The data come from the RNA Mapping Database (RMDB), library OK3TST. Structure probing data (2A3 and DMS) for a 207-nucleotide construct. The RNA was probed in 150 mM KOAc, 10 mM MgCl2 and 150 mM bicine (pH 8.5) at 24 C.

RNA sequence: GGGAACGACUCGAGUAGAGUCGAAAAGCACACAUUGAAGAGGUUGACAGAACCGAACUAGAUGUGUUUAUGGGAUGCACAUUUCCAGCCAGAACUCCUGCACAAAAGAAAACAAGAAAGGUAUUGGAACAGCUGUGUAGAGCAGUAGUGGAUGUAAGUAUUAGGACAAAUUCGUUUGUCCUAAUACAAAAGAAACAACAACAACAAC
Reactivity to 2A3 in 0.01 (KOAc 150mM, MgCl2 10mM, bicine 150mM(pH8.5), 24C), signal-to-noise 9, nucleotides 027 to 156: g040c020a000c000a000c010a040u030u080g080a140a020g050a070g080g020u050u070g120a140c110a130g170a050a010c010c020g030a090a020c030u030a030g020a100u030g020u010g020u030u090u090a130u080g040g000g030a020u090g040c040a020c000a090u040u070u030c030c010a010g020c010c010a030g040a100a040c010u030c030c010u050g000c070a040c030a030a080a030a040g130a030a090a050a020c080a070a020g110a150a070a010g100g000u100a080u110u130g040g000a060a030c010a040g030c040u020g000u020g010u110a030g030a010g080c060a010g000u110a020g030u020g040g030a080u070g040u110a090a090
Reactivity to DMS in 0.01 (KOAc 150mM, MgCl2 10mM, bicine 150mM(pH8.5), 24C), signal-to-noise 5, nucleotides 027 to 156: g010c090a050c020a050c010a090u010u000g010a130a110g020a300g020g020u000u000g020a240c150a160g000a080a090c040c030g000a090a080c030u000a250g010a040u000g010u000g020u000u020u000a080u010g010g020g010a120u010g000c030a060c060a090u010u000u000c020c010a080g020c030c040a110g000a080a100c050u000c030c000u000g030c030a120c060a060a050a090a130g000a100a040a090a100c030a050a100g010a050a100a090g000g010u000a060u000u000g010g020a070a100c070a110g010c050u010g000u000g020u010a080g010a140g000c020a030g020u010a060g030u000g000g010a080u010g020u010a080a230